RNA sequence: GGGAACGACUCGAGUAGAGUCGAAAAGAAAGAAAGAAAGAACUCUGUAAAGUGAGGGAUUGCCUGGACCAGGUCGGCGAGCCUGCUCCAGUUUCCUUCGCUCUGCUCAACGGGCAGACCGCCACAAAAAACGCGUGGCUGUUCGCAGCCACGCGAACAUGUUGAAACGGUUCGCCGUUUCAACAUGAAAAGAAACAACAACAACAAC
Reactivity to 2A3 in 0.01 (KOAc 150mM, MgCl2 10mM, bicine 150mM(pH8.5), 24C), signal-to-noise 2, nucleotides 027 to 156: g060a010a060a010g050a040a140a010g050a050a070a030g040a070a050c050u070c100u170g070u200a140a110a000g030u030g000a010g000g000g020a020u030u100g080c010c000u010g000g000a000c010c020a000g000g020u030c040g120g120c040g010a030g020c000c000u000g000c010u000c010c000a000g000u000u040u010c000c000u000u040c010g030c010u020c000u000g000c010u020c070a080a120c070g000g020g000c000a020g040a140c030c060g050c010c020a080c100a060a140a050a020a000a010c010g000c000g010u000g000g000c020u000g010u020u080c230g000c050a000g000c020c000a000c000g000c020g000a000a000
Structure probing data (2A3) for a 207-nucleotide construct. The 2A3 profile rests on 1,722 reads. For 2A3 the reverse transcriptase was SuperScript II with manganese. Values cover nucleotides 27 to 156.